Source information
The record gives the reactivity of an RNA of 170 nucleotides to 2A3 and DMS. Values are in units of 0.01, from 0 to 300, in steps of 10. 2A3 adducts were read by reverse transcription with SuperScript II with manganese. DMS adducts were read by reverse transcription with MarathonRT.
RNA sequence: GGGAACGACUCGAGUAGAGUCGAAAACCCCCUGAUGUCCAGUCCCUCCCCCGUCCGAGAGAAGGGAGACUCCGGAACUCCUGCCAUUUGAGGGACGAAGCCGCCACCGGGCGCUCCCCUCGGACCUAAACCAAGUACUUCGGUACUUGGAAAAGAAACAACAACAACAAC
Reactivity to 2A3 in 0.01 (KOAc 150mM, MgCl2 10mM, bicine 150mM(pH8.5), 24C), signal-to-noise 9, nucleotides 027 to 129: c010c000c000c000c010u070g070a090u120g150u050c020c010a000g000u000c000c000c000u000c000c000c000c000c000g020u000c000c010g010a010g000a010g030a080a180g010g000g010a000g020a040c010u000c020c010g000g030a040a020c030u010c020c020u040g070c060c040a170u140u100u240g100a100g020g040g000a010c040g070a060a020g040c040c020g020c040c010a100c020c010g020g030g000c130g010c000u000c000c000c000c000u010c000g010g010a010c000c010u120a080a020a010
Reactivity to DMS in 0.01 (KOAc 150mM, MgCl2 10mM, bicine 150mM(pH8.5), 24C), signal-to-noise 8, nucleotides 027 to 129: c000c000c010c030c020u040g030a130u030g030u010c010c030a050g020u030c030c030c000u000c000c000c010c020c060g030u020c000c020g000a080g010a130g000a160a180g000g000g000a000g030a100c000u000c000c000g000g030a040a060c110u030c020c030u000g030c070c040a130u050u040u080g040a160g000g000g000a050c070g040a040a070g010c040c000g030c100c020a130c070c060g040g010g040c190g040c050u010c040c020c010c010u010c000g020g000a050c050c090u060a060a070a140
For 2A3, 35,652 sequencing reads were counted.
The RNA was probed in 150 mM KOAc, 10 mM MgCl2 and 150 mM bicine (pH 8.5) at 24 C.
Reactivities are given for positions 27 through 129.
The DMS profile rests on 46,348 reads.